This 177-nucleotide RNA was probed chemically with 2A3 and DMS.
For DMS, 2,072 sequencing reads were counted.
It was measured as part of the RMDB library OK2TRN.
DMS adducts were read by reverse transcription with MarathonRT.
[RMDB]
RNA sequence: GGGAACGACUCGAGUAGAGUCGAAAACGACCGAGGCACCGCCAUCGGCCGCGUGGUGGUUCGCGAGAUCCGGGAACACGUCACUAUAGACUACGAGAUGUUCGGGGUGCUGUACCUCACAGUCAGGAGCGAAAUGAGUAUUCGUACUCAUUUCGCUAAAAGAAACAACAACAACAAC
Reactivity to 2A3 in 0.01 (KOAc 150mM, MgCl2 10mM, bicine 150mM(pH8.5), 24C), signal-to-noise 2, nucleotides 027 to 126: c030g020a010c020c020g040a060g030g010c050a050c250c090g030c000c000a290u060c040g080g000c020c010g020c000g000u030g010g030u030g000g050u020u040c070g010c050g130a100g060a090u050c050c000g020g030g070a060a000c180a030c060g020u030c010a010c050u110a080u090a230g030a030c010u030a040c050g030a010g040a130u070g060u060u040c010g000g010g020g030u060g050c040u020g020u050a090c010c020u010c010a020c020a020g050u070c030a030g000g180
Reactivity to DMS in 0.01 (KOAc 150mM, MgCl2 10mM, bicine 150mM(pH8.5), 24C), signal-to-noise 2, nucleotides 027 to 126: c050g000a060c070c000g000a060g010g000c010a070c180c140g010c040c010a100u000c020g010g000c040c020g010c050g000u000g000g000u010g020g000u000u000c030g000c030g020a150g060a090u020c060c000g000g000g000a060a040c020a070c070g000u010c050a040c080u000a170u000a190g000a040c040u010a120c070g000a080g010a140u010g010u010u000c020g030g000g000g020u010g010c060u000g010u010a050c040c020u000c140a120c120a080g000u010c060a080g000g000